Record summary:
This 177-nucleotide RNA was probed chemically with 2A3 and DMS. It was measured as part of the RMDB library OK1LIB. The RNA was probed in 150 mM KOAc, 10 mM MgCl2 and 150 mM bicine (pH 8.5) at 24 C.
RNA sequence: GGGAACGACUCGAGUAGAGUCGAAAAGAGCAAGUGGAUUAAUUCGAUGCAACGCGAAGUACCUUACAUAGGUUUGUCAUGCACAGGACGUGCCUAGAGAAUGGUAUUCCAUUGUGGCCUGUCAGCAGUAUAUUUUUAAAUUCGUUUAAAAAUAUACAAAAGAAACAACAACAACAAC
Reactivity to 2A3 in 0.01 (KOAc 150mM, MgCl2 10mM, bicine 150mM(pH8.5), 24C), signal-to-noise 9, nucleotides 027 to 126: g070a010g020c030a040a050g110u050g070g010a040u090u160a110a100u130u100c020g020a020u100g080c070a090a030c140g000c010g030a020a000g030u030a020c000c000u040u050a050c020a110u060a020g040g000u030u070u140g020u020c030a050u150g100c100a080c040a120g070g070a000c020g020u050g000c000c000u080a080g020a010g070a190a050u100g010g000u040a050u080u010c010c010a010u010u070g100u040g110g030c010c010u060g060u110c050a030g030c020a000
Reactivity to DMS in 0.01 (KOAc 150mM, MgCl2 10mM, bicine 150mM(pH8.5), 24C), signal-to-noise 8, nucleotides 027 to 126: g000a090g010c030a030a050g040u010g000g010a060u010u020a050a080u010u010c020g000a050u010g010c180a070a080c090g000c030g020a040a020g010u000a020c010c010u000u030a150c160a110u010a010g010g010u000u010u020g010u010c010a050u020g010c180a080c240a130g000g010a020c000g010u000g000c010c010u000a000g010a070g000a050a060u020g000g000u000a140u000u000c010c000a040u010u010g010u000g000g000c010c010u000g010u010c050a070g010c140a140